[RMDB]
RNA sequence: GGGAACGACUCGAGUAGAGUCGAAAAGAUAUGGACCACUCUUAGCUAGCUUAUAUAUCGGAAACGAUAUAAAGCUUGGACCUAAGAGGUGGUCCUAAGUCAAAAGCACGUUGUUCGCAACGUGCAACAUGCGCACACAGUUCGCUGUGUGCGCAUGAAAAGAAACAACAACAACAAC
Reactivity to DMS in 0.01 (KOAc 150mM, MgCl2 10mM, bicine 150mM(pH8.5), 24C), signal-to-noise 1, nucleotides 027 to 126: g000a030u000a300u040g000g000a000c000c000a120c000u000c000u010u010a020g000c020u000a000g000c000u010u000a130u000a020u000a010u030c020g040g010a170a100a250c020g010a000u000a000u000a020a010a010g000c000u010u000g010g010a110c300c030u000a000a000g000a040g010g010u000g000g040u030c000c000u020a010a040g000u000c080a060a120a050a180g010c000a000c000g060u000u000g010u000u020c160g010c000a000a020c010g000u010g000c010a030a040
About this RNA: Structure probing data (DMS) for a 177-nucleotide construct. For DMS the reverse transcriptase was MarathonRT. The reactions ran in a buffer of 150 mM KOAc, 10 mM MgCl2 and 150 mM bicine (pH 8.5), at 24 C.